[RMDB]
Annotation
Structure probing data (2A3) for a 177-nucleotide construct. It was measured as part of the RMDB library OK1LIB.
RNA sequence: GGGAACGACUCGAGUAGAGUCGAAAAGCGGCACACUGCCCUGCAACGCCAGACCGAUGGCGAACAACCGCUGGAUCACGUGAUCGUGGAGGUCGCGUGCGAUGCGAUCACGCUCGGUCACCACGUCGGGAGGUCGACGGUUCGCCGUCGACCUCCCAAAAGAAACAACAACAACAAC
Reactivity to 2A3 in 0.01 (KOAc 150mM, MgCl2 10mM, bicine 150mM(pH8.5), 24C), signal-to-noise 2, nucleotides 027 to 126: g020c060g000g000c070a040c020a000c030u050g010c000c080c000u020g000c010a030a030c020g070c030c000a010g050a040c040c040g040a080u120g090g000c020g010a070a050c000a000a050c110c000g000c000u030g020g060a190u160c020a020c000g000u020g000a000u000c010g040u040g250g110a060g090g020u020c000g000c030g040u000g040c000g010a020u120g000c020g040a000u050c030a000c050g010c040u020c030g010g030u000c020a000c090c030a060c050g100u070c070